Background
An RNA of 207 nucleotides, treated with 2A3 and read out base by base. The 2A3 profile rests on 3,298 reads.

RNA sequence: GGGAACGACUCGAGUAGAGUCGAAAACUGCCGCCGGGACGCCGUGAUCCUCGCAGGGUCGCACGGUCGCCUCGGGUCGGCCUCGUGUCGGCUCGACCUGCGAGGGGAGCGAGUGGCGAGCCCGACCAAAACUUUCUCGCCUUCGGGCGAGAAAGAACGUGUCUAAAAUGUUCGCAUUUUAGACACGAAAAGAAACAACAACAACAAC
Reactivity to 2A3 in 0.01 (KOAc 150mM, MgCl2 10mM, bicine 150mM(pH8.5), 24C), signal-to-noise 2, nucleotides 027 to 156: c030u070g050c010c020g030c010c010g030g030g030a030c000g020c000c040g210u020g000a030u010c000c000u000c010g000c010a010g040g020g030u180c080g020c050a100c140g110g030u080c040g010c010c020u020c020g010g000g000u010c010g010g000c010c000u070c100g240u300g020u000c000g000g000c010u020c020g060a080c010c000u000g000c000g000a000g000g010g000g000a030g010c020g030a110g090u130g020g000c000g020a060g030c010c020c000g010a020c010c000a040a050a010a080c010u000u000u000c000u000c000g020c000c020u010u100c210g070g000g000c000g000a010g010a000a000a000g000a000a020